[RMDB]
RNA sequence: GGGAACGACUCGAGUAGAGUCGAAAAACAAAAUCAUUAGAGAAGAGGAGUUCAAGGAAUCAAGGAGUAUCUUUAUUUUCUUCCCACAUAAUUGUUACACUUACUGCAUAUAAAAUAACAGUAGUCCUUUUCCUUUAAAAUUCAAGUAGAUAUAGUGCCUAGCAGUUAUAUUCGUAUAACUGCUAGGAAAAGAAACAACAACAACAAC
Reactivity to 2A3 in 0.01 (KOAc 150mM, MgCl2 10mM, bicine 150mM(pH8.5), 24C), signal-to-noise 3, nucleotides 027 to 156: a020c110a020a090a030a040u190c070a070u130u300a020g060a020g040a200a000g010a040g060g000a000g020u100u070c030a010a010g030g000a020a040u140c090a050a050g010g010a030g010u020a020u050c040u040u070u020a100u160u140u060u000c100u030u030c010c030c000a050c000a010u160a020a050u100u100g050u110u050a010c020a000c040u030u100a020c010u000g040c090a040u130a010u070a180a190a120a090u100a040a020c020a010g020u030a010g070u000c000c010u040u030u010u050c000c000u110u070u120a030a150a070a050u160u050c020a040a000g060u020a020g100a060u100a000u060a200g070u090g010
Reactivity to DMS in 0.01 (KOAc 150mM, MgCl2 10mM, bicine 150mM(pH8.5), 24C), signal-to-noise 2, nucleotides 027 to 156: a180c050a090a070a060a110u000c040a080u010u010a130g000a130g020a100a120g030a070g010g030a080g020u000u010c040a080a050g030g020a050a020u000c120a030a080g020g010a090g010u000a050u000c050u000u000u000a070u000u000u010u040c050u000u000c020c010c030a130c220a110u020a050a060u010u000g000u000u000a080c040a100c040u020u000a020c020u000g040c080a170u010a200u000a040a020a060a300u010a040a030c020a030g000u000a060g010u000c020c000u010u020u010u000c000c010u000u000u000a020a040a050a090u000u000c030a080a060g000u000a030g020a100u020a080u000a150g000u010g000